[RMDB]
RNA sequence: GGGAACGACUCGAGUAGAGUCGAAAAUGACCAGCCUAAUUUGCGUUGCCUUCCACCGUUUUCCUCGUUUUUGUCUCCACGUUCUCGGCCACAAACACCAACUGGCAACUUUUUUUGUUUGUGCAAAAACACGGGAGUGUUUCGACACUCCCGUGUUAAAAGAAACAACAACAACAAC
Reactivity to DMS in 0.01 (KOAc 150mM, MgCl2 10mM, bicine 150mM(pH8.5), 24C), signal-to-noise 2, nucleotides 027 to 126: u010g000a150c010c020a130g000c040c060u030a070a090u000u010u010g000c060g010u000u020g010c050c010u000u000c020c030a050c060c060g040u010u010u010u000c010c020u010c060g010u010u010u030u000u000g010u000c010u010c010c020a220c040g010u000u000c010u000c040g050g000c120c010a020c020a020a050a050c050a040c100c080a030a040c080u010g010g000c220a050a110c020u000u000u000u000u000u000u000g020u010u000u010g030u000g000c110a040a060a060